The record gives the reactivity of an RNA of 177 nucleotides to 2A3 and DMS.
The reactions ran in a buffer of 150 mM KOAc, 10 mM MgCl2 and 150 mM bicine (pH 8.5), at 24 C.
For 2A3 the reverse transcriptase was SuperScript II with manganese.
For 2A3, 1,396 sequencing reads were counted.
2A3 is a SHAPE reagent: it acylates the 2'-hydroxyl of flexible nucleotides of all four kinds.

RNA sequence: GGGAACGACUCGAGUAGAGUCGAAAACCUUUUUUUUCAGAGGGUUGUGAACCCGCGUGGGGAUGAGGCCUGGUCUUGUGGAUACUGAACUUAGCUUCGCGGGCCUGACAGCUCUGGCCCAGGGUGGAACUUGUUUACGUUUCGACGUAAACAAGUUAAAAGAAACAACAACAACAAC
Reactivity to 2A3 in 0.01 (KOAc 150mM, MgCl2 10mM, bicine 150mM(pH8.5), 24C), signal-to-noise 2, nucleotides 027 to 126: c020c010u030u030u000u020u000u000u000u000c090a050g010a030g010g030g000u090u080g070u100g100a080a050c000c000c010g030c040g010u090g000g010g000g040a060u080g010a050g010g040c000c050u010g030g020u000c000u100u160g040u100g040g030a040u060a220c050u070g050a060a040c020u110u030a020g050c000u050u060c070g000c030g010g040g000c000c000u000g040a000c020a000g020c000u010c020u030g040g050c000c070c000a000g010g010g010u050g000g040
Reactivity to DMS in 0.01 (KOAc 150mM, MgCl2 10mM, bicine 150mM(pH8.5), 24C), signal-to-noise 5, nucleotides 027 to 126: c000c000u000u000u000u000u000u010u020u010c080a080g000a070g010g000g010u010u010g000u010g010a100a100c030c010c010g000c070g010u020g000g010g000g010a130u010g010a080g010g010c030c020u010g000g010u000c020u000u000g030u020g010g000a080u000a090c060u000g010a090a070c090u010u010a090g010c180u000u010c030g020c080g000g000g010c040c010u000g000a070c090a080g000c050u000c040u000g000g000c010c010c010a100g010g000g010u000g010g010